This 177-nucleotide RNA was probed chemically with DMS and 2A3. Source: RMDB library OK2TST, as collected in RNAgym. For DMS the reverse transcriptase was MarathonRT. Conditions: 150 mM KOAc, 10 mM MgCl2 and 150 mM bicine (pH 8.5), 24 C. Values cover nucleotides 27 to 126.
RNA sequence: GGGAACGACUCGAGUAGAGUCGAAAAGCAUUUCUUUCCUGUUUGACUCUGGAGUAGAAGGGAUCUGGAAGACUUAGGGUUCCUGGGAACAGAGCAAACAUAUCAACAAGGGGCCCUUCUCAAGUCCCAAAGUAACCACAUUCGUGUGGUUACUUUGAAAAGAAACAACAACAACAAC
Reactivity to DMS in 0.01 (KOAc 150mM, MgCl2 10mM, bicine 150mM(pH8.5), 24C), signal-to-noise 6, nucleotides 027 to 126: g010c170a100u000u000u010c080u000u000u000c050c040u000g010u010u010u000g010a140c010u010c010u000g000g000a160g020u000a120g010a150a040g000g010g000a020u000c010u000g010g010a140a110g000a080c170u000u010a180g000g000g010u000u000c000c010u000g010g000g000a120a140c030a030g010a020g000c010a010a010a010c030a070u010a080u010c150a080a100c160a090a100g010g010g010g010c010c030c010u000u000c030u000c070a140a170g000u000c030c060
Reactivity to 2A3 in 0.01 (KOAc 150mM, MgCl2 10mM, bicine 150mM(pH8.5), 24C), signal-to-noise 3, nucleotides 027 to 126: g000c060a090u080u150u080c000u050u070u030c010c020u040g060u010u050u090g130a280c000u010c000u020g080g010a040g040u150a040g120a170a020g020g000g010a010u020c020u060g100g110a210a090g130a210c080u140u150a070g010g000g000u030u060c000c000u010g000g030g010a070a020c000a020g020a000g000c010a010a040a000c000a000u110a020u060c080a050a160c020a110a100g050g000g010g000c000c000c000u090u020c020u010c010a020a040g020u020c000c000